Overview:
Structure probing data (2A3) for a 177-nucleotide construct. It was measured as part of the RMDB library OK1LIB.
RNA sequence: GGGAACGACUCGAGUAGAGUCGAAAAGAAGAGAAACGCGCGAGGGCCCGGGCGCGCGCCCUACCGGAAAUAAAACCAUAUCCAUUUGUGCUGAGAUAUGGCCCGGCACAAAGAAACAGCACAAAGAGCAUGAGCUAGUAUUCGUACUAGCUCAUGCAAAAGAAACAACAACAACAAC
Reactivity to 2A3 in 0.01 (KOAc 150mM, MgCl2 10mM, bicine 150mM(pH8.5), 24C), signal-to-noise 2, nucleotides 027 to 126: g060a050a010g100a010g040a110a080a030c010g000c000g010c000g010a030g040g040g000c040c020c010g050g000g000c000g000c000g000c000g040c000c000c000u060a100c000c000g070g140a080a170a000u290a030a100a000a000c000c000a000u000a000u020c000c030a110u030u070u060g010u010g000c010u010g010a010g000a090u000a040u010g000g000c000c000c000g040g020c010a000c020a100a150a030g070a020a070a000c010a000g010c010a000c000a000a030a000g150a010